[RMDB]
RNA sequence: GGGAACGACUCGAGUAGAGUCGAAAAUUUACUGUUCGCAGUAAACCAAGUGGGGUCGAUCAAUGACGUAGCUAAGAAGCUGAAGCCUCCACGGCGUAUCUUAGUCUAUAAGACAGAUCGACGGAGGCACCCGUCACCGAAAGGUUCGCCUUUCGAACUACACAUAUAACUUCGGUUAUAUGUGUAGAAAAGAAACAACAACAACAAC
Reactivity to DMS in 0.01 (KOAc 150mM, MgCl2 10mM, bicine 150mM(pH8.5), 24C), signal-to-noise 3, nucleotides 027 to 156: u000u000u000a010c010u000g020u030u010c260g090c010a050g000u020a010a040a040c030c060a120a200g030u000g010g020g000g020u000c020g040a050u000c040a130a160u020g000a150c110g010u000a080g020c020u010a060a050g020a080a110g040c030u000g010a060a110g040c000c010u000c010c070a300c050g050g010c000g030u000a070u010c010u000u000a020g020u010c080u000a090u020a070a180g020a240c100a110g010a000u000c000g020a050c040g010g010a030g030g030c030a040c040c010c060g010u000c080a070c030c000g000a020a060a070g000g000u000u000c300g020c020c040u020u000u010c010g020a080a210
Reactivity to 2A3 in 0.01 (KOAc 150mM, MgCl2 10mM, bicine 150mM(pH8.5), 24C), signal-to-noise 4, nucleotides 027 to 156: u020u020u000a000c010u000g070u040u080c280g010c100a000g010u020a000a030a040c050c020a150a050g090u200g100g040g020g010u020c020g020a020u030c030a110a120u190g060a090c120g070u090a010g010c000u030a040a050g020a140a020g060c010u020g020a070a010g010c000c000u030c040c010a040c020g030g000c010g010u090a050u020c000u020u010a020g100u010c050u090a170u060a260a080g050a030c030a030g010a020u000c010g030a030c000g000g000a000g000g000c000a010c000c010c010g170u170c030a040c120c050g020a000a010a000g010g000u040u080c210g110c010c010u000u000u010c010g000a010a010
Conditions: 150 mM KOAc, 10 mM MgCl2 and 150 mM bicine (pH 8.5), 24 C. The record gives the reactivity of an RNA of 207 nucleotides to DMS and 2A3. For 2A3 the reverse transcriptase was SuperScript II with manganese. The data come from the RNA Mapping Database (RMDB), library RNAMAK.